[RMDB]
RNA sequence: GGGAACGACUCGAGUAGAGUCGAAAACUGGAACAGUAUCAGCAGUUGGCAUAAUGAAUUGUAGUGCUUUCAAAUAUCAAGCUAGCAUAGCAUGGUCUGUCAGGGGGUUCAGUGACAUUUUAAUUCUGAGGACUUGAUACAUUUUAUAGAAUAUGAACUAUCAUCGUGGUUUCGACCACGAUGAUAGAAAAGAAACAACAACAACAAC
Reactivity to 2A3 in 0.01 (KOAc 150mM, MgCl2 10mM, bicine 150mM(pH8.5), 24C), signal-to-noise 3, nucleotides 027 to 156: c010u030g050g070a060a000c010a020g080u120a020u090c020a030g000c020a010g040u030u030g000g000c060a070u070a130a120u150g080a090a090u070u130g050u120a120g030u050g070c000u070u080u050c130a150a140a040u150a040u100c030a060a000g020c020u040a000g000c010a050u040a020g020c010a030u070g000g010u040c020u020g050u080c070a050g030g020g000g010g010u010u020c000a020g030u040g060a000c000a010u000u020u000u000a020a030u060u100c090u070g050a090g030g040a030c000u040u070g020a000u080a070c040a070u080u160u070u100a110u100a120g030a070a050u300a070u300g040a020a030
Reactivity to DMS in 0.01 (KOAc 150mM, MgCl2 10mM, bicine 150mM(pH8.5), 24C), signal-to-noise 2, nucleotides 027 to 156: c020u010g020g010a120a100c050a120g050u000a090u010c020a050g020c020a040g020u010u000g010g020c030a050u000a120a110u000g000a120a100u000u020g020u020a130g030u000g010c010u000u010u030c040a100a120a160u000a100u000c100a060a130g010c030u010a070g020c050a050u000a130g030c000a150u010g000g020u000c010u000g010u000c060a190g030g030g030g050g030u000u020c020a050g010u010g030a050c030a050u010u020u000u010a020a050u000u000c030u000g000a160g000g010a130c070u000u000g000a160u010a040c040a100u000u000u000u000a130u000a170g000a070a090u000a060u000g000a070a170

The data come from the RNA Mapping Database (RMDB), library OK3TST. The record gives the reactivity of an RNA of 207 nucleotides to 2A3 and DMS. 2A3 adducts were read by reverse transcription with SuperScript II with manganese. The reactions ran in a buffer of 150 mM KOAc, 10 mM MgCl2 and 150 mM bicine (pH 8.5), at 24 C. Values cover nucleotides 27 to 156.